[RMDB]
RNA sequence: GGGAACGACUCGAGUAGAGUCGAAAAACGAGUCCGUACGCGGACUCGAAGGGCCCCAGAAGACCAAGGGGCCCAAACCUACCACUCAUUAGAUGCAUGGAAAUCACGAGGUGAUACGUCACCUAGAACACGCUUUUAAGCUUCGGCUUAAAAGCAACUAGAAGGUUAUGUUCGCAUAACCUUCUAGAAAAGAAACAACAACAACAAC
Reactivity to DMS in 0.01 (KOAc 150mM, MgCl2 10mM, bicine 150mM(pH8.5), 24C), signal-to-noise 1, nucleotides 027 to 156: a100c010g000a050g050u010c000c000g000u000a080c170g030c030g050g000a000c000u020c010g000a030a110g000g070g000c000c020c050c000a250g000a090a130g010a170c050c030a060a190g010g020g070g050c020c000c000a000a000a060c040c020u000a180c080c020a050c030u000c030a150u000u000a130g000a140u000g000c050a050u000g000g000a070a070a080u000c050a110c000g000a020g000g040u000g020a120u000a050c170g050u000c050a020c000c000u010a060g010a100a150c130a110c160g010c020u000u000u020u000a000a020g020c010u000u020c290g060g000c020u020u080a000a010a000a030g030c000a000a020
Reactivity to 2A3 in 0.01 (KOAc 150mM, MgCl2 10mM, bicine 150mM(pH8.5), 24C), signal-to-noise 4, nucleotides 027 to 156: a010c000g000a000g000u000c000c010g000u020a010c260g030c020g070g000a000c000u000c000g000a000a000g000g000g000c010c010c000c000a120g110a300a030g060a140c080c040a110a100g020g000g010g000c000c000c000a000a000a000c000c000u020a030c000c010a030c050u090c000a030u050u170a040g050a050u100g050c080a050u070g080g090a110a100a090u170c080a100c160g050a040g000g000u010g010a020u050a090c180g040u000c000a000c000c010u000a020g060a060a070c120a010c130g000c000u000u000u000u000a000a000g000c000u040u100c230g070g000c000u010u000a000a000a000a000g000c000a000a010
About this RNA: An RNA of 207 nucleotides, treated with DMS and 2A3 and read out base by base. The reactions ran in a buffer of 150 mM KOAc, 10 mM MgCl2 and 150 mM bicine (pH 8.5), at 24 C. For 2A3, 2,614 sequencing reads were counted. DMS adducts were read by reverse transcription with MarathonRT. 2A3 adducts were read by reverse transcription with SuperScript II with manganese.